RNA sequence: GGGAACGACUCGAGUAGAGUCGAAAAAAUCAGACAUGCACCCCAGCUGGAUAAUUAUCAUGGGAAUCGUGAACAUCCUUGCCUGCACCCUCUUUUCCUUUGUGAUUUACCCCCGCUUUGAUUUUGGCCAAAGGAUGAUAUUCGUAUCAUCCUUUGGAAAAGAAACAACAACAACAAC
Reactivity to 2A3 in 0.01 (KOAc 150mM, MgCl2 10mM, bicine 150mM(pH8.5), 24C), signal-to-noise 2, nucleotides 027 to 126: a000a000u120c030a020g000a050c000a090u060g000c030a050c010c000c000c000a010g060c020u060g040g040a020u050a110a060u160u170a060u120c040a030u060g050g000g090a040a040u140c030g010u040g040a020a030c010a090u010c030c000u030u090g030c000c020u050g000c020a050c000c000c000u000c020u000u010u060u100c000c000u060u100u070g110u060g050a060u000u030u300a140c030c000c000c000c000g030c000u020u020u040g050a060u020u130u050u090g070g050
Reactivity to DMS in 0.01 (KOAc 150mM, MgCl2 10mM, bicine 150mM(pH8.5), 24C), signal-to-noise 6, nucleotides 027 to 126: a050a020u010c030a050g000a080c100a070u000g010c070a090c060c010c010c040a100g020c050u010g010g000a050u010a080a080u010u010a100u010c050a050u000g010g000g020a070a060u010c060g030u000g010a070a090c090a070u000c030c030u000u010g000c050c020u000g000c060a100c050c020c020u000c030u000u000u000u000c010c010u000u000u010g020u010g000a100u000u000u000a290c070c030c010c040c030g010c140u010u000u000g000a140u000u000u010u000g010g020